[RMDB]
RNA sequence: GGGAACGACUCGAGUAGAGUCGAAAAUCUAAAGACGGCCAAGUGUUUUGCUAAUCCGCCAUACAGCCCGGCUAAGUAUAUCGGCAAAGGGCGUAAGAAUAGAAUUGCGCUCUGCGGUAUGAGAAACAUCAUGGCUAAGGCUUACGAGGAACACAAGACUAUAGACAUUCUUCGGAAUGUCUAUAGUAAAAGAAACAACAACAACAAC
Reactivity to 2A3 in 0.01 (KOAc 150mM, MgCl2 10mM, bicine 150mM(pH8.5), 24C), signal-to-noise 3, nucleotides 027 to 156: u030c010u050a140a030a030g050a050c050g020g000c000c000a050a050g020u010g010u040u040u020u040g010c000u010a030a090u080c040c010g010c030c010a050u080a160c080a050g060c060c090c030g030g000c030u010a010a010g030u040a130u070a050u230c010g030g000c020a060a070a140g040g000g000c000g010u000a000a000g060a070a070u190a160g160a090a120u020u030g010c000g000c000u000c040u070g000c000g000g000u040a030u100g100a090g010a010a000a000c020a030u170c050a130u090g000g000c000u020a030a030g040g000c000u030u050a050c100g040a040g020g060a080a030c100a010c040a130a060g090
Reactivity to DMS in 0.01 (KOAc 150mM, MgCl2 10mM, bicine 150mM(pH8.5), 24C), signal-to-noise 2, nucleotides 027 to 156: u000c040u000a080a080a060g000a110c040g030g000c000c010a030a200g030u000g030u010u020u000u000g010c040u000a210a180u000c000c020g060c000c000a070u000a180c070a120g000c000c000c090g040g080c130u010a040a210g040u000a110u000a060u020c040g010g050c030a040a020a030g020g010g020c000g020u000a020a020g010a080a160u000a150g000a140a270u000u010g010c000g030c010u000c000u010g000c020g010g030u000a110u000g000a070g010a090a000a060c050a030u010c040a220u000g010g020c030u000a040a060g020g000c010u000u000a090c060g000a160g020g000a070a040c060a120c060a090a130g010